[RMDB]
RNA sequence: GGGAACGACUCGAGUAGAGUCGAAAAGAUAUGGAAGUUUCCGAGUUUACCUUACUUGGACCUUGUGUUCUCGGAAACGAGAACACAAGCUAGUAAGGCGGAACGUUUGACGAAACUUCCUAAGUCAUCACGCAGAUUAGUUCGCUAAUCUGCGUGAAAAAGAAACAACAACAACAAC
Reactivity to DMS in 0.01 (KOAc 150mM, MgCl2 10mM, bicine 150mM(pH8.5), 24C), signal-to-noise 1, nucleotides 027 to 126: g000a050u000a300u010g000g000a020a000g000u000u000u000c000c000g010a110g020u010u000u000a050c000c010u000u000a000c010u000u000g030g010a110c300c020u000u000g000u010g000u000u000c020u010c000g000g000a120a110a210c010g020a090g000a020a000c000a000c000a000a010g000c030u000a020g000u000a020a010g010g040c020g000g010a010a010c020g000u000u000u000g020a250c300g010a030a010a000c010u000u020c000c000u000a060a170g020u000c010a100